[RMDB]
RNA sequence: GGGAACGACUCGAGUAGAGUCGAAAACGAGGAAAAUCGUAUCGAUUGAAAUCUGCGUCCCGGGGCCGAUUGGGAGGAUACCGGAGAUCGAUAGACGACAGCAGCGCGCUUGCGCUUCUGCUCGACUUGCCAUAAGACAAUUCGUUGUCUUAUGGCAAAAAGAAACAACAACAACAAC
Reactivity to 2A3 in 0.01 (KOAc 150mM, MgCl2 10mM, bicine 150mM(pH8.5), 24C), signal-to-noise 5, nucleotides 027 to 126: c010g010a030g070g200a130a040a050a100u060c030g000u070a050u080c040g020a040u000u080g040a060a050a070u040c030u050g020c020g050u020c000c000c000g000g000g020g000c070c040g150a210u140u140g040g020g010a100g030g030a020u070a130c000c030g000g000a100g000a040u100c010g010a020u030a040g080a020c010g000a010c010a000g020c010a000g000c000g010c000g030c130u180u300g010c020g000c000u000u000c000u000g050c080u000c000g010a020c010u020
Reactivity to DMS in 0.01 (KOAc 150mM, MgCl2 10mM, bicine 150mM(pH8.5), 24C), signal-to-noise 4, nucleotides 027 to 126: c080g010a040g000g000a190a090a060a050u000c010g030u010a060u020c040g000a010u000u000g010a070a110a090u010c020u010g010c100g010u000c030c000c010g000g000g000g000c080c030g000a120u020u000g010g000g000a100g010g000a120u030a060c110c060g000g010a130g000a060u000c040g010a070u020a040g010a160c030g000a050c000a030g000c070a020g000c070g000c000g000c280u050u070g010c020g010c000u000u010c010u000g020c080u010c020g010a090c100u000